[RMDB]
RNA sequence: GGGAACGACUCGAGUAGAGUCGAAAAGAUAUGGAUCACAAUACUUCGAUAAGCCUGGGUUCGGAAACGAACCUGGGCUUUUGACGAAGUUGUGAUCCUAAGUCAAAUCCAGUGUUCGCACUGGAAAGUACAAACGAUGGUUCGCCAUCGUUUGUACAAAAGAAACAACAACAACAAC
Reactivity to DMS in 0.01 (KOAc 150mM, MgCl2 10mM, bicine 150mM(pH8.5), 24C), signal-to-noise 1, nucleotides 027 to 126: g000a010u000a200u030g030g000a010u000c000a020c000a000a080u000a100c020u000u000c000g030a180u000a020a040g000c000c000u000g000g000g000u000u000c000g050g000a050a000a080c000g020a010a000c000c000u000g000g000g030c000u000u000u020u000g010a200c060g000a000a010g000u010u000g020u020g010a010u000c000c000u000a000a080g000u000c030a100a160a170u020c010c000a000g030u000g030u020u020c300g010c020a010c000u000g030g000a000a000a070

An RNA of 177 nucleotides, treated with DMS and read out base by base. Values cover nucleotides 27 to 126. Reactivities are rounded to 0.1 and cut off at 0 and 3.